Source information: Structure probing data (2A3 and DMS) for a 177-nucleotide construct. Values cover nucleotides 27 to 126. Source: RMDB library OK1LIB, as collected in RNAgym. As a SHAPE reagent, 2A3 marks flexible, mostly unpaired nucleotides at the ribose 2'-OH. The reactions ran in a buffer of 150 mM KOAc, 10 mM MgCl2 and 150 mM bicine (pH 8.5), at 24 C. The DMS profile rests on 4,220 reads.
RNA sequence: GGGAACGACUCGAGUAGAGUCGAAAAGUAGUGAGGCAACGUCGUCUACGACGUUCCACUAUGAAGCGGUCGGCAGGCUUUGGAAGUACGUGGACGAUGUAGAGUCUGCACGACAUGAGCAGGCAUGCCGGCAAGCUUCGUUCGCGAAGUUUGCCGGAAAAGAAACAACAACAACAAC
Reactivity to 2A3 in 0.01 (KOAc 150mM, MgCl2 10mM, bicine 150mM(pH8.5), 24C), signal-to-noise 1, nucleotides 027 to 126: g050u080a000g020u010g070a070g050g050c010a030a030c000g010u000c000g010u010c000u090a040c040g010a000c010g050u000u000c010c000a010c000u070a070u100g020a000a000g050c020g000g020u060c000g020g010c040a010g010g030c000u010u000u000g030g020a000a000g030u030a050c020g030u060g010g020a000c000g000a010u000g000u010a000g030a000g010u010c000u030g020c060a040c020g030a010c000a080u130g000a020g000c000a000g010g020c010a010u020g030
Reactivity to DMS in 0.01 (KOAc 150mM, MgCl2 10mM, bicine 150mM(pH8.5), 24C), signal-to-noise 2, nucleotides 027 to 126: g020u000a030g000u000g020a140g000g000c130a020a060c010g000u000c010g000u020c050u020a060c020g010a030c050g000u010u010c000c000a080c160u030a040u040g000a080a050g000c020g010g000u000c020g010g020c050a070g000g010c060u000u000u000g000g010a040a020g010u010a060c030g000u000g000g000a010c020g000a040u010g010u040a070g010a050g010u000c000u000g000c010a140c050g020a060c100a100u050g000a100g000c060a040g000g020c060a130u020g000